[RMDB]
RNA sequence: GGGAACGACUCGAGUAGAGUCGAAAAUUGCGUCAUGAGUAAGGCCGAGAUUGGCAUCAGAGAUCGUUACGAAUUCAUGUGUAUUCGUGAGGCGCUAUCUGUGAGUAUCGGAACUGACAGCAGGGCCGUCGAUGUGUACGUUCGCGUGCGUGUUGACAAAAGAAACAACAACAACAAC
Reactivity to 2A3 in 0.01 (KOAc 150mM, MgCl2 10mM, bicine 150mM(pH8.5), 24C), signal-to-noise 7, nucleotides 027 to 126: u090u050g010c020g020u020c020a040u130g050a030g140u130a100a050g080g000c000c000g040a030g020a130u110u180g090g010c040a050u070c010a020g020a000g000a090u140c020g030u040u090a010c000g000a010a000u000u060c080a150u180g210u000g000u010a010u000u010c000g000u010g070a160g130g000c010g000c060u030a040u020c010u010g050u020g040a020g030u040a050u070c010g000g020a030a050c010u020g020a020c020a040g020c010a010g020g030g030c020c010
Reactivity to DMS in 0.01 (KOAc 150mM, MgCl2 10mM, bicine 150mM(pH8.5), 24C), signal-to-noise 2, nucleotides 027 to 126: u050u000g000c030g020u020c020a040u020g010a100g000u030a110a100g020g010c010c000g020a070g010a130u020u030g010g020c070a110u030c030a040g000a090g000a100u010c060g000u000u030a050c020g020a050a050u010u010c090a300u000g000u140g000u000a040u000u000c000g010u000g000a130g000g030c100g000c110u000a090u010c010u000g010u000g010a060g010u020a090u020c050g010g000a070a080c040u000g000a040c090a070g030c080a010g000g000g010c010c010